An RNA of 177 nucleotides, treated with 2A3 and DMS and read out base by base. Conditions: 150 mM KOAc, 10 mM MgCl2 and 150 mM bicine (pH 8.5), 24 C. For 2A3 the reverse transcriptase was SuperScript II with manganese.

RNA sequence: GGGAACGACUCGAGUAGAGUCGAAAAGCUCGGUCGGUGUCUGCGGCGGAGUUGCCGGUCCUUCGGUGACAUUGAUUGCCGCCAAAGCGUUUUCGUCGAUCUUGCCGUGUGGAGUCAGCGGUAACUCCAGUACAAUAAUGUUCGCAUUAUUGUACUGAAAAGAAACAACAACAACAAC
Reactivity to 2A3 in 0.01 (KOAc 150mM, MgCl2 10mM, bicine 150mM(pH8.5), 24C), signal-to-noise 9, nucleotides 027 to 126: g020c010u030c070g010g010u040c010g000g050u070g080u070c040u050g010c010g020g000c020g020g010a120g030u010u010g010c010c000g040g070u200c040c020u190u210c010g000g010u020g000a010c010a040u050u180g100a090u140u290g090c000c000g000c000c000a040a020a010g030c040g010u050u030u050u100c030g010u010c010g020a040u010c000u050u080g010c010c010g040u070g050u070g070g050a050g070u100c040a020g040c010g020g030u030a040a040c020u010c030
Reactivity to DMS in 0.01 (KOAc 150mM, MgCl2 10mM, bicine 150mM(pH8.5), 24C), signal-to-noise 9, nucleotides 027 to 126: g010c030u000c060g010g010u000c020g010g010u010g000u010c030u000g010c300g000g010c020g000g000a090g010u000u000g010c010c010g010g010u010c140c130u010u010c020g010g010u000g010a010c020a180u010u010g000a150u010u010g010c020c010g010c020c070a030a230a060g010c110g010u010u000u010u010c100g010u000c020g000a030u000c040u000u000g010c010c020g010u000g010u000g000g010a060g000u000c060a270g010c050g000g010u000a060a040c080u000c030